[RMDB]
RNA sequence: GGGAACGACUCGAGUAGAGUCGAAAAAGCAACGAGUGUGUGUGGGACGUAUUAUCCCAAGCUCUGAGUAGAGCACGCGCUCACACACACCGCGAGCGAGCAUCAGCAGAGCGCAAACGCUGGUAAAGUACGGCUGGAAAUUCGUUUCCAGCCGUACAAAAGAAACAACAACAACAAC
Reactivity to 2A3 in 0.01 (KOAc 150mM, MgCl2 10mM, bicine 150mM(pH8.5), 24C), signal-to-noise 2, nucleotides 027 to 126: a000g110c050a060a070c010g010a070g070u010g010u000g000u000g000u010g020g000g020a010c000g020u080a120u190u090a090u130c000c020c020a010a010g010c000u000c010u070g290a250g160u300a010g140a000g030c010a020c010g050c000g000c010u020c010a000c010a000c010a000c010a000c000c000g050c020g030a020g000c010g020a050g000c010a040u090c020a010g000c000a010g010a040g140c110g020c040a080a040a000c040g000c020u000g030g050u090a090a040a020
Reactivity to DMS in 0.01 (KOAc 150mM, MgCl2 10mM, bicine 150mM(pH8.5), 24C), signal-to-noise 2, nucleotides 027 to 126: a090g020c030a230a060c010g000a260g000u020g030u000g040u000g010u000g020g000g000a040c000g000u010a080u000u000a110u000c040c020c040a100a130g000c000u000c000u000g010a180g010u030a060g000a000g010c020a090c090g010c040g000c000u000c010a040c010a010c000a010c010a010c000c030g050c040g000a150g000c010g000a050g010c140a040u000c020a020g010c000a050g030a110g030c040g010c200a090a060a050c100g000c010u000g000g020u010a050a050a130